[RMDB]
RNA sequence: GGGAACGACUCGAGUAGAGUCGAAAAUCAAGUUCGCUUGAAUAUCUUCCUAAGUCUGGGUACUCAUCCCAGGAUCGAGGAUCGUACAUCGGAAACGAUGUACGGGAGAUCCUGUGAGAUGAGGCCCAGAUAUGGAGCCGACCUCGUUCGCGAGGAAGGCUGCAAAUUUAUUCGUAAAUUUGCAGCCAAAAGAAACAACAACAACAAC
Reactivity to DMS in 0.01 (KOAc 150mM, MgCl2 10mM, bicine 150mM(pH8.5), 24C), signal-to-noise 2, nucleotides 027 to 156: u000c020a040a250g000u010u010c180g000c030u010u000g010a110a160u000a080u000c030u000u010c000c020u020a090a260g010u000c000u010g020g020g060u000a140c010u000c010a030u000c010c000c000a010g030g000a020u000c000g040a110g040g000a030u000c000g030u000a000c000a000u010c000g010g020a160a180a300c010g000a030u000g030u000a000c010g000g030g000a090g020a020u000c000c000u000g000u020g010a120g030a000u010g010a010g010g010c000c010c010a000g000a000u000a080u010g000g000a060g040c080c020g000a130c000c000u000c000g000u000u000c240g040c010g010a010g020g000a060a140
Reactivity to 2A3 in 0.01 (KOAc 150mM, MgCl2 10mM, bicine 150mM(pH8.5), 24C), signal-to-noise 9, nucleotides 027 to 156: u030c000a010a000g040u070u110c180g070c110u010u030g020a070a040u140a120u240c100u170u070c010c010u030a160a030g010u000c000u010g000g030g030u170a300c000u000c000a000u000c000c000c000a000g000g000a000u000c010g020a220g040g020a010u010c000g000u000a000c000a000u000c000g030g030a080a060a060c010g000a000u000g000u000a000c000g000g000g000a010g000a000u000c000c010u030g040u070g040a300g000a030u000g000a000g000g000c000c000c000a000g000a000u000a000u010g000g010a020g040c030c030g070a080c000c010u010c000g040u100u090c200g020c010g130a000g000g020a020a060